[RMDB]
RNA sequence: GGGAACGACUCGAGUAGAGUCGAAAAGAUAUGGAGUUGGUAUGGGAGACGUUCGGAAACGAAUACGUCGAGGAUCAUACGACUCCUAAGUCAAAUCAUUAUCAGUCCUUCGGGACUGAUAAUGAAAGAUUCGGGUAUUGUUCGCAAUACCCGAAUCAAAAGAAACAACAACAACAAC
Reactivity to DMS in 0.01 (KOAc 150mM, MgCl2 10mM, bicine 150mM(pH8.5), 24C), signal-to-noise 1, nucleotides 027 to 126: g030a020u000a300u000g010g010a010g030u010u000g070g030u000a000u000g020g010g030a040g000a010c010g030u000u000c010g000g000a110a120a140c010g000a010a140u010a090c010g010u000c000g000a110g050g000a040u000c000a010u000a020c000g010a030c000u000c000c010u000a010a080g010u000c030a100a160a150u000c000a000u000u000a000u000c000a010g000u000c000c000u000u010c280g020g000g000a040c000u000g020a000u000a000a000u020g000a000a070a030
Reactivity to 2A3 in 0.01 (KOAc 150mM, MgCl2 10mM, bicine 150mM(pH8.5), 24C), signal-to-noise 1, nucleotides 027 to 126: g020a000u040a020u120g040g010a010g030u090u150g190g070u180a000u010g000g030g050a020g010a010c020g010u010u020c020g050g030a010a030a100c040g040a030a060u300a220c010g000u000c000g060a160g000g020a030u030c000a000u020a000c000g020a020c020u010c000c000u010a150a020g050u010c030a000a020a240u000c000a010u000u000a000u000c000a010g010u010c010c010u000u120c270g060g000g000a000c000u020g000a000u000a000a010u000g030a000a000a000